[RMDB]
Chemical mapping of a 207-nucleotide RNA with 2A3.
RNA sequence: GGGAACGACUCGAGUAGAGUCGAAAACCCUUAUUUUGAGAAGCUGAGGGAUUUGGCCCAUAGAAGCUUCAGCAACCGACUUUAAAUAGCACGGUGCUAAUACCAACGAGCAACUCGAAUGAUAAGUAAAACGUUGACAAGUUCGCUUGUCAACGAACUUGCUAUACGACUUCGGUCGUAUAGCAAGAAAAGAAACAACAACAACAAC
Reactivity to 2A3 in 0.01 (KOAc 150mM, MgCl2 10mM, bicine 150mM(pH8.5), 24C), signal-to-noise 2, nucleotides 027 to 156: c000c000c000u020u110a270u050u150u150u130g090a050g000a000a010g000c000u000g010a030g000g000g010a000u020u040u080g000g050c000c000c000a080u140a110g050a010a010g000c000u050u010c010a000g000c000a000a050c030c000g060a010c000u140u090u230a200a130a200u180a090g010c010a000c090g010g000u000g000c000u000a050a000u020a050c000c020a030a040c050g070a070g090c070a060a110c130u010c150g070a070a050u140g040a040u050a150a000g030u070a030a110a050a010c060g000u000u060g000a000c000a000a000g000u010u110c220g070c210u000u010g000u000c010a000a000c000g000a000a000